[RMDB]
RNA sequence: GGGAACGACUCGAGUAGAGUCGAAAAACGCGAAGCGGUGUAGCGUCACUUUGAUGGCGGUACUAUGAAUUGAUGCAAGGUGUGGAGCGACCUUAAACAGUUCUGGUGGUGCUCUGAAUGGAGUGCUUGAGGCCUCGCCGAUUCGUCGGCGAGGCAAUCUGAUCUCACGAUUCGUCGUGAGAUCAGAAAAAGAAACAACAACAACAAC
Reactivity to 2A3 in 0.01 (KOAc 150mM, MgCl2 10mM, bicine 150mM(pH8.5), 24C), signal-to-noise 1, nucleotides 027 to 156: a000c050g050c050g070a110a030g050c000g020g040u080g010u090a050g020c010g010u000c030a010c020u200u210u290g130a250u120g040g030c050g000g070u000a020c070u040a070u150g070a050a000u100u080g030a040u070g030c070a020a020g000g000u070g060u070g060g010a010g000c010g000a050c000c000u060u050a120a100a040c020a050g000u020u000c010u050g040g000u010g070g000u010g030c030u010c030u060g160a030a070u230g020g000a000g030u000g060c000u010u090g050a100g170g000c000c000u000c000g010c010c000g010a030u070u040c180g090u000c010g010g000c000g070a000g000g000c000a000a000
Source information
Source: RMDB library M2RFPK, as collected in RNAgym. Chemical mapping of a 207-nucleotide RNA with 2A3. 2A3 adducts were read by reverse transcription with SuperScript II with manganese.